[RMDB]
RNA sequence: GGGAACGACUCGAGUAGAGUCGAAAAAACAGUUAGCGUAGAUCCUCUCGGCAUCGCCCAUGUGCUCGAGUAAGGGUCCUAACUUUAGUGGGAUACGUUUCAACUUUCCGUCUGUAAGUUGAAAAAGAGAACAUCAGACUAGCGAUACAGAAUGCCUUACAACGUCAAAGUUCGCUUUGACGUUGUAAAAAGAAACAACAACAACAAC
Reactivity to 2A3 in 0.01 (KOAc 150mM, MgCl2 10mM, bicine 150mM(pH8.5), 24C), signal-to-noise 4, nucleotides 027 to 156: a000a000c100a050g020u080u070a040g070c130g130u140a060g050a160u070c000c000u010c000u000c000g000g000c000a000u000c020g020c000c000c000a010u020g010u010g000c050u090c180g010a000g010u070a130a130g010g000g010u010c020c020u040a080a080c030u180u200u130a020g010u010g010g020g000a010u000a000c000g000u000u000u000c000a000a000c000u010u020u000c010c010g020u000c010u000g000u000a000a000g000u000u000g010a000a000a000a000a000g000a010g030a100a030c050a080u060c010a010g000a010c000u020a010g010c050g110a040u050a180c080a060g130a110a120u130g040c000c010u030
Description: Conditions: 150 mM KOAc, 10 mM MgCl2 and 150 mM bicine (pH 8.5), 24 C. This 207-nucleotide RNA was probed chemically with 2A3. 2A3 adducts were read by reverse transcription with SuperScript II with manganese. For 2A3, 2,930 sequencing reads were counted.